Chemical mapping of a 177-nucleotide RNA with 2A3 and DMS. The RNA was probed in 150 mM KOAc, 10 mM MgCl2 and 150 mM bicine (pH 8.5) at 24 C. 2A3 adducts were read by reverse transcription with SuperScript II with manganese. Values cover nucleotides 27 to 126.
[RMDB]
RNA sequence: GGGAACGACUCGAGUAGAGUCGAAAACGAUGAAGCCUGCCCAGCGGGGCUUGGCGGUCAUGGGCUUUCUCUCCGGAGGGAGAGAAAGUACCAUGAUAGCUGGGGGAAUCGGCGAGGCCCGGAAGGGUGCAGCUAUUUCUUUCGAGAAAUAGCUGCAAAAAGAAACAACAACAACAAC
Reactivity to 2A3 in 0.01 (KOAc 150mM, MgCl2 10mM, bicine 150mM(pH8.5), 24C), signal-to-noise 2, nucleotides 027 to 126: c060g020a040u160g080a060a010g040c000c000u020g010c010c030c040a020g080c050g050g040g020g000c070u020u040g080g030c030g000g000u000c000a010u010g000g000g000c000u010u000u020c000u000c010u020c030c000g140g140a180g150g140g000a010g010a000g000a000a000a000g000u000a040c000c000a000u000g000a000u010a000g010c010u030g000g000g000g020g080a030a130u070c040g020g000c040g030a080g030g000c000c010c010g000g070a070a060g030g010g030
Reactivity to DMS in 0.01 (KOAc 150mM, MgCl2 10mM, bicine 150mM(pH8.5), 24C), signal-to-noise 1, nucleotides 027 to 126: c060g030a110u020g000a260a120g020c000c020u000g000c010c000c000a110g000c060g020g030g010g000c040u000u000g000g000c040g000g000u000c000a030u020g000g000g020c020u000u000u000c000u000c010u000c000c000g020g100a300g010g020g000a060g020a040g020a020a000a000g000u000a030c000c000a000u000g000a020u020a040g000c050u020g000g050g010g010g000a130a080u040c090g010g000c010g000a080g020g010c020c030c030g030g030a030a110g010g020g010